[RMDB]
The data come from the RNA Mapping Database (RMDB), libraries RFM100 and RFMREP. The record gives the reactivity of an RNA of 177 nucleotides to DMS and 2A3. Values cover nucleotides 27 to 126. DMS adducts were read by reverse transcription with MarathonRT. For 2A3 the reverse transcriptase was SuperScript II with manganese. The 2A3 profile rests on 1,517 reads.
RNA sequence: GGGAACGACUCGAGUAGAGUCGAAAACUGAGCGAAAUCAGGUGGCCGCAUAUAUUGCGAGCCAGAUAGGGCAGAACGCGCAGUCCGUGCAGACCACGGCAGAGUCGCAUUUGCGUUGCUCGAGGCGAUUGAAUGACUGCUUCGGCAGUCAUUCAAUAAAAGAAACAACAACAACAAC
Reactivity to DMS in 0.01 (KOAc 150mM, MgCl2 10mM, bicine 150mM(pH8.5), 24C), signal-to-noise 3, nucleotides 027 to 126: c020u010g020a020g050c070g000a130a170a050u020c050a100g010g060u010g000g000c030c030g000c010a050u050a100u030a060u000u010g010c000g000a160g010c040c000a020g020a050u030a100g000g010g000c050a070g010a020a080c110g000c040g020c010a110g010u040c010c010g010u000g000c150a180g020a130c300c010a020c000g000g000c020a100g000a130g000u050c000g030c010a080u010u010u000g000c030g010u000u010g000c000u000c020g010a090g000g030c080g000
Reactivity to 2A3 in 0.01 (KOAc 150mM, MgCl2 10mM, bicine 150mM(pH8.5), 24C), signal-to-noise 3, nucleotides 027 to 126: c020u000g000a000g010c050g130a130a060a010u070c000a060g180g090u010g010g000c010c000g000c020a000u130a030u040a100u150u140g000c000g000a010g060c000c000a000g020a060u080a060g050g030g000c000a010g040a140a020c040g010c000g000c000a020g060u030c020c020g000u020g000c030a060g040a210c060c000a000c010g020g000c050a050g010a040g170u140c010g020c010a000u090u040u080g020c030g040u020u090g010c010u000c010g020a020g000g030c090g010